[RMDB]
The record gives the reactivity of an RNA of 207 nucleotides to 2A3 and DMS. The reactions ran in a buffer of 150 mM KOAc, 10 mM MgCl2 and 150 mM bicine (pH 8.5), at 24 C. 2A3 is a SHAPE reagent: it acylates the 2'-hydroxyl of flexible nucleotides of all four kinds. The DMS profile rests on 3,297 reads. DMS adducts were read by reverse transcription with MarathonRT. The 2A3 profile rests on 2,946 reads. For 2A3 the reverse transcriptase was SuperScript II with manganese.

RNA sequence: GGGAACGACUCGAGUAGAGUCGAAAAGAAGUGUGCCUGCCAUUCAAAAGAUUUUGGAUCACUGGCGUCCAGCGGAGAAACAGGAGCUCGUCUCCUUCCUUUCGCUGCUGGCUCCACAUCCGAUCGUCGCUGAAGCGCCACGCCCCCUCGCCCGGAGCAUCACUCGAUAGUUCGCUAUCGAGUGAUGAAAAGAAACAACAACAACAAC
Reactivity to 2A3 in 0.01 (KOAc 150mM, MgCl2 10mM, bicine 150mM(pH8.5), 24C), signal-to-noise 3, nucleotides 027 to 156: g080a100a040g040u040g020u070g040c010c070u080g020c040c040a170u040u150c060a070a070a100a050g010a020u100u130u150u290g020g000a000u000c010a010c050u010g000g000c020g060u150c010c000a000g000c010g050g010a030g010a050a070a120c300a250g030g010a010g010c060u160c300g270u120c110u000c000c000u010u040c000c000u000u010u010c020g000c030u000g000c000u000g000g000c000u010c000c010a040c010a010u000c010c010g010a020u020c010g070u030c000g010c120u060g030a070a020g060c020g000c040c010a010c000g080c000c010c000c010c010u010c030g010c020c030c020g010g020a030g000
Reactivity to DMS in 0.01 (KOAc 150mM, MgCl2 10mM, bicine 150mM(pH8.5), 24C), signal-to-noise 1, nucleotides 027 to 156: g000a120a140g020u010g030u000g000c040c030u010g000c050c030a180u030u000c060a060a120a090a210g000a120u000u020u010u000g040g010a040u010c030a130c050u000g030g030c030g000u000c000c000a020g020c010g050g030a040g010a050a060a000c080a090g020g000a050g050c010u000c300g000u000c000u000c010c000u000u040c030c000u000u000u000c020g030c000u010g030c000u000g000g030c000u000c000c000a030c050a090u000c000c010g000a030u000c020g010u000c070g000c130u000g020a090a110g020c050g020c030c030a080c060g020c000c020c000c000c010u000c060g020c020c020c010g000g020a180g010